[RMDB]
RNA sequence: GGGAACGACUCGAGUAGAGUCGAAAAUCGACCUGGAAGUCGACGCCGGCGACGGACAACGACGCCUAGGUAAGUAAAUCAACGCACUUUUUGUUGAGAAUCUGCCUGAACUGACCUUGACACGCAGUCGCUAGAUAAGGUUCGCCUUAUCUAGCGAAAAAGAAACAACAACAACAAC
Reactivity to DMS in 0.01 (KOAc 150mM, MgCl2 10mM, bicine 150mM(pH8.5), 24C), signal-to-noise 4, nucleotides 027 to 126: u010c050g000a080c020c010u010g000g000a050a230g000u010c010g000a110c290g000c030c010g000g000c180g040a210c090g000g020a120c100a070a300c070g000a020c000g010c120c020u000a020g010g000u000a040a040g010u000a040a110a070u020c040a020a040c020g000c230a100c150u000u000u010u000u010g020u010u000g020a060g030a130a060u010c030u020g000c020c030u000g010a070a030c020u010g010a120c020c020u000u030g000a100c070a040c160g000c080a120g000
Reactivity to 2A3 in 0.01 (KOAc 150mM, MgCl2 10mM, bicine 150mM(pH8.5), 24C), signal-to-noise 7, nucleotides 027 to 126: u070c020g030a020c010c000u040g090g050a110a030g030u010c010g000a060c050g020c020c010g020g020c020g020a050c030g030g050a070c060a090a060c070g020a010c010g040c000c010u020a030g050g000u050a080a090g070u080a030a140a070u020c010a010a020c020g070c060a150c120u110u130u050u170u270g030u010u020g000a020g020a060a080u010c020u040g010c000c000u030g030a060a040c020u050g070a110c020c020u050u080g030a010c010a010c100g040c020a030g040